RNA sequence: GGGAACGACUCGAGUAGAGUCGAAAAGAUAUGGACUACUGGAGAACCCGGUCGGAAACGACCGGGUUCGUUGAAAGUACAUGUCCUAAGUCAAACCAUAGUGAGUUCUUCGGAACUCACUAUGGAACAUUGUACCAGGGUUCGCCCUGGUACAAUGAAAAGAAACAACAACAACAAC
Reactivity to DMS in 0.01 (KOAc 150mM, MgCl2 10mM, bicine 150mM(pH8.5), 24C), signal-to-noise 2, nucleotides 027 to 126: g010a030u010a120u000g000g000a010c000u000a040c020u010g000g000a090g030a010a000c000c000c000g000g010u000c000g010g010a050a070a100c010g020a030c000c000g030g000g010u000u000c000g000u000u010g010a180a100a030g000u000a020c250a090u000g000u010c000c000u000a020a170g010u000c050a150a090a180c010c000a010u000a000g010u010g000a000g000u000u000c000u000u020c220g040g000a010a000c000u010c000a000c000u000a000u000g030g000a060a090